Annotation:
An RNA of 177 nucleotides, treated with 2A3 and DMS and read out base by base. The data come from the RNA Mapping Database (RMDB), library OK2TST. The reactions ran in a buffer of 150 mM KOAc, 10 mM MgCl2 and 150 mM bicine (pH 8.5), at 24 C.
[RMDB]
RNA sequence: GGGAACGACUCGAGUAGAGUCGAAAAUUCUACAGUUUUGUGGUCAAGAAUGCUACUGAUUAUAUUCAACUGAAAAUUUCUUGUCCCAUUUGGCCUACAAUGCUUUAGUUUAUAAGUGGGCAUGUGGCACAGAAAGAAAGUUCGCUUUCUUUCUGUGAAAAGAAACAACAACAACAAC
Reactivity to 2A3 in 0.01 (KOAc 150mM, MgCl2 10mM, bicine 150mM(pH8.5), 24C), signal-to-noise 4, nucleotides 027 to 126: u030u020c010u060a150c000a020g020u020u040u140u160g030u030g000g010u020c010a040a080g070a220a150u150g110c040u050a070c010u020g030a030u060u130a060u040a030u170u150c040a010a010c010u030g060a040a030a080a110u050u060u040c030u060u060g030u020c000c000c010a010u050u070u110g150g020c020c000u000a010c030a030a080u030g010c010u170u170u150a060g050u200u230u070a220u050a210a070g060u070g020g000g000c000a010u060g020u030g020g000
Reactivity to DMS in 0.01 (KOAc 150mM, MgCl2 10mM, bicine 150mM(pH8.5), 24C), signal-to-noise 7, nucleotides 027 to 126: u010u000c030u000a180c020a020g000u000u000u000u000g020u000g010g010u000c020a040a080g000a130a110u010g010c190u010a100c080u000g000a040u000u000a050u000a050u000u000c120a030a030c020u000g000a080a070a040a050u000u000u000c060u010u000g010u000c010c000c000a160u000u010u000g010g010c020c010u010a030c030a070a080u010g010c070u000u000u010a070g010u000u000u000a080u010a100a150g010u000g000g000g020c010a020u000g010u000g010g000
For DMS, 10,625 sequencing reads were counted.